[RMDB]
Structure probing data (DMS and 2A3) for a 177-nucleotide construct. The DMS profile rests on 7,534 reads. 2A3 is a SHAPE reagent: it acylates the 2'-hydroxyl of flexible nucleotides of all four kinds. The reactions ran in a buffer of 150 mM KOAc, 10 mM MgCl2 and 150 mM bicine (pH 8.5), at 24 C. For DMS the reverse transcriptase was MarathonRT.

RNA sequence: GGGAACGACUCGAGUAGAGUCGAAAAUAGGGCAUUAUUGAUGGCUGCAUAUUGGGUUACAAUAUCCUCUUUUUUCAUCAACUCUAAGGCGAUAUUGAUUUGGCGGAUCACCUCUGCAUAGAGCAUCAACACAAAGAUCUUUCGAGAUCUUUGUGUUAAAAGAAACAACAACAACAAC
Reactivity to DMS in 0.01 (KOAc 150mM, MgCl2 10mM, bicine 150mM(pH8.5), 24C), signal-to-noise 6, nucleotides 027 to 126: u000a060g010g000g000c100a050u000u000a060u010u000g000a100u010g000g010c060u000g000c060a080u000a090u010u000g010g000g000u010u000a110c050a030a030u000a030u000c170c020u010c010u000u000u000u010u000u010c060a070u010c160a060a100c090u000c050u010a060a080g010g010c150g000a030u000a040u010u010g010a140u000u000u010g010g010c050g000g010a090u000c050a050c070c050u000c030u000g010c100a110u010a050g000a060g010c080a070u000c110
Reactivity to 2A3 in 0.01 (KOAc 150mM, MgCl2 10mM, bicine 150mM(pH8.5), 24C), signal-to-noise 5, nucleotides 027 to 126: u110a020g020g000g020c030a030u050u080a050u080u150g060a070u070g070g030c040u070g040c080a030u070a100u200u200g050g000g020u050u060a050c030a030a030u020a030u070c020c010u040c060u060u110u010u040u060u040c060a140u060c010a060a050c020u020c030u070a030a040g030g000c010g030a020u010a050u070u090g060a100u060u030u140g030g010c020g010g020a010u020c000a020c040c020u010c020u040g020c040a040u070a060g060a010g040c020a040u100c050